[RMDB]
RNA sequence: GGGAACGACUCGAGUAGAGUCGAAAACGCAGUGGUGGAGUGACAGCCCGACUUGGUCACGUGUAAAAGGACAAGUGUCUUUGGUUUUGGCGCUUUUUUCGCUUGCCUUCCAGGCGACAUCGUGAAGACUAUGGGACGCAUUCGUGCGUCCCAUAGUAAAAGAAACAACAACAACAAC
Reactivity to DMS in 0.01 (KOAc 150mM, MgCl2 10mM, bicine 150mM(pH8.5), 24C), signal-to-noise 3, nucleotides 027 to 126: c140g010c040a060g020u020g030g040u030g030g000a100g000u010g010a040c160a120g010c010c020c020g020a130c110u020u020g030g010u010c050a030c060g000u010g030u010a060a040a040a070g000g000a060c040a060a030g010u000g000u000c020u000u000u000g010g010u010u010u000u020g020g000c080g020c100u000u010u010u000u010u000c020g020c040u000u020g020c050c050u000u050c090c040a050g020g030c000g010a040c190a020u020c050g000u030g000a120a070g010
Reactivity to 2A3 in 0.01 (KOAc 150mM, MgCl2 10mM, bicine 150mM(pH8.5), 24C), signal-to-noise 2, nucleotides 027 to 126: c050g000c010a030g060u050g090g020u050g010g000a060g030u060g040a040c050a040g000c000c000c010g090a100c020u050u130g070g010u050c030a020c100g020u050g000u050a070a170a060a040g040g030a040c070a070a040g020u000g040u090c000u060u070u080g100g010u050u020u040u100g030g010c030g000c000u080u030u020u020u040u020c030g000c000u050u030g010c010c030u030u080c070c040a030g020g000c000g000a020c020a050u050c090g010u050g070a060a010g020